Background: An RNA of 177 nucleotides, treated with DMS and 2A3 and read out base by base. Conditions: 150 mM KOAc, 10 mM MgCl2 and 150 mM bicine (pH 8.5), 24 C. The 2A3 profile rests on 2,245 reads. Source: RMDB library OK1LIB, as collected in RNAgym. 2A3 adducts were read by reverse transcription with SuperScript II with manganese. Reactivities are given for positions 27 through 126.
RNA sequence: GGGAACGACUCGAGUAGAGUCGAAAACACGAAUGUUGGCUAAUCCUGGUCGGACAUCAGGUGGUUAGUGCAUUGGCAUAAGCCAUCUUGGCGCUAAUAGAUACUAAUCGUAGCAUAGCUGAAUAAACAUAGGGUGCAGUUUCGACUGCACCCUAUGAAAAGAAACAACAACAACAAC
Reactivity to DMS in 0.01 (KOAc 150mM, MgCl2 10mM, bicine 150mM(pH8.5), 24C), signal-to-noise 4, nucleotides 027 to 126: c060a150c170g000a140a100u020g000u000u010g000g020c030u010a090a170u030c010c030u000g020g000u010c140g000g040a270c130a010u010c040a020g000g020u020g000g030u000u010a090g010u000g030c010a120u010u050g010g000c020a160u000a040a170g000c010c000a090u050c140u030u010g020g010c000g010c020u000a010a010u010a090g020a090u000a050c050u010a040a030u000c030g010u010a050g050c130a170u020a100g010c050u010g030a080a120u000a070a110a130
Reactivity to 2A3 in 0.01 (KOAc 150mM, MgCl2 10mM, bicine 150mM(pH8.5), 24C), signal-to-noise 4, nucleotides 027 to 126: c050a030c060g110a110a150u150g060u090u070g020g010c020u010a030a090u020c000c000u000g000g010u020c090g120g090a050c020a070u030c020a030g000g000u040g020g000u050u010a020g000u010g020c000a030u060u050g050g000c010a040u050a270a020g000c020c020a040u070c090u060u180g000g000c000g000c000u020a020a000u050a130g110a090u020a030c010u030a050a020u050c030g080u060a000g050c040a070u040a050g040c010u020g080a050a050u090a110a070a020